[RMDB]
RNA sequence: GGGAACGACUCGAGUAGAGUCGAAAAGGUAGGGCAUUCGUGCCCUACCACACCUCUAAGCAGAUUGGCGAGGACGACGUCGCCGCCCACGUUUACCAACAACUACUCUCUCCUUCGGGAGAGAGAAUCCUAGAGAAACUUUCGAGUUUCUCUAGGAAAAAGAAACAACAACAACAAC
Reactivity to 2A3 in 0.01 (KOAc 150mM, MgCl2 10mM, bicine 150mM(pH8.5), 24C), signal-to-noise 2, nucleotides 027 to 126: g000g000u010a000g010g000g000c010a000u010u100c190g090u030g000c010c000c000u000a000c000c000a000c000a010c000c000u000c050u060a080a080g050c080a030g020a300u110u150g040g030c040g010a040g070g030a080c130g030a050c080g190u040c050g020c050c060g010c020c000c000a050c030g020u030u060u060a190c010c020a050a060c010a040a040c050u180a130c000u040c000u000c000u020c010c010u000u060c150g120g000g000a000g000a000g000a000g000a000a020
Reactivity to DMS in 0.01 (KOAc 150mM, MgCl2 10mM, bicine 150mM(pH8.5), 24C), signal-to-noise 3, nucleotides 027 to 126: g000g000u000a000g000g010g010c000a040u000u010c200g030u000g000c000c000c000u000a000c000c000a030c110a080c050c000u000c120u010a110a100g020c110a050g010a120u020u000g010g020c020g020a030g000g000a130c140g010a070c070g010u000c050g050c020c020g000c010c020c040a270c050g010u000u000u000a110c040c010a040a030c150a080a070c090u000a110c000u000c000u000c000u000c000c000u000u010c140g000g000g000a000g000a000g000a000g000a050a070
Source: RMDB library M2PK50, as collected in RNAgym. The record gives the reactivity of an RNA of 177 nucleotides to 2A3 and DMS. High DMS reactivity at an A or C suggests that its Watson-Crick edge is free. The RNA was probed in 150 mM KOAc, 10 mM MgCl2 and 150 mM bicine (pH 8.5) at 24 C. The 2A3 profile rests on 1,811 reads. For DMS, 2,434 sequencing reads were counted. For 2A3 the reverse transcriptase was SuperScript II with manganese. DMS adducts were read by reverse transcription with MarathonRT. High 2A3 reactivity points to a flexible backbone, as in loops and unpaired stretches.